RNA sequence: GGGAACGACUCGAGUAGAGUCGAAAAGAAGAUCAGUAGAAUCGAUAUUCAGCCUGGGGUUUUUAUCAGAGGUGUAUUGCAUAUUAUAUGUAGAUAAUGUGAGAUGAUUUAUCAAUGUCACAGCCACCCACUCAAAGGUAUUCGUACCUUUGAGUGGAAAAGAAACAACAACAACAAC
Reactivity to DMS in 0.01 (KOAc 150mM, MgCl2 10mM, bicine 150mM(pH8.5), 24C), signal-to-noise 3, nucleotides 027 to 126: g010a070a110g010a020u010c010a050g000u000a140g010a200a090u010c100g010a060u000a060u000u000c050a120g000c030c010u010g030g000g010g010u020u000u030u000u020a050u030c110a060g000a100g010g040u010g010u010a030u000u000g000c020a030u000a100u000u000a080u010a030u020g000u030a060g000a090u010a030a080u000g020u010g020a050g000a040u010g010a040u000u000u010a100u020c040a080a040u010g010u000c020a020c050a100g010c090c050a100c270
Reactivity to 2A3 in 0.01 (KOAc 150mM, MgCl2 10mM, bicine 150mM(pH8.5), 24C), signal-to-noise 1, nucleotides 027 to 126: g010a000a040g030a030u010c040a010g190u170a020g040a160a050u150c060g010a010u050a060u090u020c020a000g020c010c010u000g040g000g060g050u060u200u090u050u210a050u140c020a000g050a040g030g030u020g000u100a070u010u090g010c000a010u010a070u190u260a150u100a000u300g000u010a020g040a160u050a050a060u050g010u020g030a000g000a110u040g060a120u150u130u040a090u040c020a060a060u040g020u050c010a000c000a030g070c000c020a030c020
Annotation:
An RNA of 177 nucleotides, treated with DMS and 2A3 and read out base by base. The RNA was probed in 150 mM KOAc, 10 mM MgCl2 and 150 mM bicine (pH 8.5) at 24 C. Values cover nucleotides 27 to 126. DMS adducts were read by reverse transcription with MarathonRT. Source: RMDB library OK2TRN, as collected in RNAgym.